[RMDB]
RNA sequence: GGGAACGACUCGAGUAGAGUCGAAAAUGUGUCAUGGAAUAAAGCAUUUCGGAAUUUCUUGUGAGGCGAAAGUGCUUUAGUAACAAAAGCGAAAUUCCAAGCAUUGCACCUUAACAGUAAAUAGGAGAUCCGUAUUAUGAUUCGUCAUAAUACGGAUAAAAGAAACAACAACAACAAC
Reactivity to DMS in 0.01 (KOAc 150mM, MgCl2 10mM, bicine 150mM(pH8.5), 24C), signal-to-noise 9, nucleotides 027 to 126: u000g000u010g010u020c150a130u010g010g010a040a050u010a010a030a040g010c010a050u000u000u000c020g020g020a130a070u000u020u010c030u030u040g000u030g000a040g000g000c010g000a020a030a030g020u010g000c000u000u000u000a030g010u010a110a150c210a040a060a080a130g010c080g000a060a100a100u000u000c020c000a060a220g000c030a030u010u010g010c160a130c010c010u010u020a060a100c190a100g000u020a020a050a070u030a050g010g010a120g000
Reactivity to 2A3 in 0.01 (KOAc 150mM, MgCl2 10mM, bicine 150mM(pH8.5), 24C), signal-to-noise 9, nucleotides 027 to 126: u070g030u010g040u100c070a100u080g020g020a040a030u030a050a020a000g000c000a010u010u030u020c020g050g060a200a120u090u210u070c100u170u300g130u250g140a040g020g050c020g050a090a050a030g150u070g000c000u010u030u010a030g010u030a080a130c070a100a090a070a010g110c050g080a110a030a000u020u000c000c000a000a000g000c020a060u000u080g060c050a070c010c000u070u180a090a060c030a090g120u200a140a200a180u170a160g000g120a130g020